RNA sequence: GGGAACGACUCGAGUAGAGUCGAAAAAAAACUGUUUUAAGGUCACCAAUUUCGGAGUGCUCUCUAAUGUCGUUUGCAUCCUGAGCUGACUAACACAGAUCAGCUCUCCCAAAAUUGGAUGAAACAAGGAGGUAUACCAAUUCGUUGGUAUACCUCCAAAAGAAACAACAACAACAAC
Reactivity to 2A3 in 0.01 (KOAc 150mM, MgCl2 10mM, bicine 150mM(pH8.5), 24C), signal-to-noise 1, nucleotides 027 to 126: a000a000a000a000c110u100g020u060u060u010u020a090a010g090g010u030c010a010c020c010a020a080u060u030u100c080g000g010a110g040u080g030c010u010c010u010c000u050a110a130u170g070u090c060g000u010u060u050g040c010a010u020c000c040u010g000a020g000c010u010g000a010c010u020a190a000c180a050c040a210g100a230u000c010a000g000c000u020c010u030c030c000c010a060a140a020a010u050u050g050g030a020u040g020a040a060a020c030a080a080
Reactivity to DMS in 0.01 (KOAc 150mM, MgCl2 10mM, bicine 150mM(pH8.5), 24C), signal-to-noise 1, nucleotides 027 to 126: a060a060a030a040c040u000g000u030u000u000u000a010a150g010g010u010c020a080c060c030a080a130u000u000u000c160g010g000a060g010u030g000c020u000c030u000c040u010a050a050u010g010u010c110g000u010u000u000g020c000a010u010c080c020u030g000a010g000c000u000g010a010c000u010a100a090c170a130c180a010g000a110u010c040a000g000c000u000c000u010c000c010c030a090a020a030a040u010u000g000g000a020u010g010a100a020a080c130a030a050
An RNA of 177 nucleotides, treated with 2A3 and DMS and read out base by base.
DMS adducts were read by reverse transcription with MarathonRT.
Conditions: 150 mM KOAc, 10 mM MgCl2 and 150 mM bicine (pH 8.5), 24 C.
The 2A3 profile rests on 1,020 reads.
Source: RMDB library OK2TST, as collected in RNAgym.
The DMS profile rests on 923 reads.